[RMDB]
RNA sequence: GGGAACGACUCGAGUAGAGUCGAAAAGAUAUGGAUCUGCCCACUGCCAACAGCUACCGUCGGAAACGACGGUAGACAUGGCAAGUGGGACAGAUCCUAAGUCAAAAUCGUCUCUUCGGAGACGAAACAUACAAUAGGAGUUCGCUCCUAUUGUAUGAAAAGAAACAACAACAACAAC
Reactivity to 2A3 in 0.01 (KOAc 150mM, MgCl2 10mM, bicine 150mM(pH8.5), 24C), signal-to-noise 6, nucleotides 027 to 126: g020a010u070a040u180g000g000a000u000c000u000g010c010c000c010a000c010u010g000c010c010a100a040c090a250g030c010u000a000c000c000g000u000c010g030g040a080a070a070c020g000a000c000g000g010u000a000g000a030c010a060u040g000g000c060a060a090g010u010g000g000g030a010c000a010g000a000u000c000c000u010a040a010g040u020c050a010a010a020a300u050c000g000u000c010u000c000u020u070c300g190g000a000g000a000c000g000a000a000a000
Reactivity to DMS in 0.01 (KOAc 150mM, MgCl2 10mM, bicine 150mM(pH8.5), 24C), signal-to-noise 9, nucleotides 027 to 126: g010a040u000a300u010g010g010a000u000c000u000g010c000c000c000a010c010u000g000c000c010a040a110c300a210g000c000u000a000c000c000g030u000c000g010g000a130a110a290c010g010a010c010g000g000u000a000g000a010c070a160u000g000g010c010a030a030g030u000g010g010g000a030c000a000g000a000u000c000c000u000a010a080g010u010c040a100a080a110a150u000c000g010u000c000u000c000u000u010c200g020g000a020g010a010c000g010a010a050a170